The data come from the RNA Mapping Database (RMDB), library OK2TST. The record gives the reactivity of an RNA of 177 nucleotides to DMS.

RNA sequence: GGGAACGACUCGAGUAGAGUCGAAAAUCCUGAUGGAGCCCUGUGUUACCCCCAGGCUCCUUUAGGGCAUGAGAGUGCCAGGGCUGGACCAUCUCCAGGCUGCACACUUUUUCUCUGCAGCUGUGAGCUCACACACACAUUUCGAUGUGUGUGUGAGAAAAGAAACAACAACAACAAC
Reactivity to DMS in 0.01 (KOAc 150mM, MgCl2 10mM, bicine 150mM(pH8.5), 24C), signal-to-noise 2, nucleotides 027 to 126: u000c000c000u010g040a010u010g000g030a130g010c030c000c020u000g000u020g020u000u010a080c020c010c020c050c030a020g000g020c000u000c010c100u020u010u010a110g010g000g010c040a040u000g000a030g000a020g020u010g000c050c020a030g000g010g010c000u000g000g020a210c000c020a030u000c020u020c100c070a210g000g000c000u000g020c020a030c170a120c270u000u020u010u010u020c110u000c080u000g000c000a010g000c000u000g010u010g010a080g000